This 177-nucleotide RNA was probed chemically with DMS and 2A3. For 2A3, 4,815 sequencing reads were counted.

RNA sequence: GGGAACGACUCGAGUAGAGUCGAAAAGCAUCAACGCCGUUGCCGGGGCGGUGCUGGUGGAGCUACGUGACUCGGACUUCCCCUACGUGCGAGUCGGUAUCGCCAAUCGCUGGGUGCCGCAGGUGAGUGAACUAGGAGUGUUCGCACUCCUAGUUCAAAAAGAAACAACAACAACAAC
Reactivity to DMS in 0.01 (KOAc 150mM, MgCl2 10mM, bicine 150mM(pH8.5), 24C), signal-to-noise 2, nucleotides 027 to 126: g010c050a040u000c090a050a150c090g000c010c020g040u010u000g030c030c020g000g000g000g000c030g000g040u000g010c050u020g000g040u030g000g000a130g000c060u000a050c020g010u000g010a060c000u040c000g000g000a060c070u000u010c020c000c000c060u030a040c200g010u000g010c030g000a050g020u000c000g010g030u020a010u040c070g010c020c050a120a070u010c040g010c040u010g000g010g030u020g000c000c000g020c040a050g020g020u000g010a100g000
Reactivity to 2A3 in 0.01 (KOAc 150mM, MgCl2 10mM, bicine 150mM(pH8.5), 24C), signal-to-noise 4, nucleotides 027 to 126: g060c020a030u070c030a030a060c020g030c030c020g080u050u080g030c010c000g020g000g040g000c000g000g010u010g010c030u030g010g040u030g030g080a060g020c040u080a030c040g160u140g040a020c010u010c030g000g060a030c000u100u110c010c010c010c010u040a020c050g040u060g150c010g000a020g010u050c030g000g010u080a070u100c070g000c060c010a050a050u070c020g000c050u060g060g040g020u030g010c000c000g010c030a040g010g060u060g020a110g030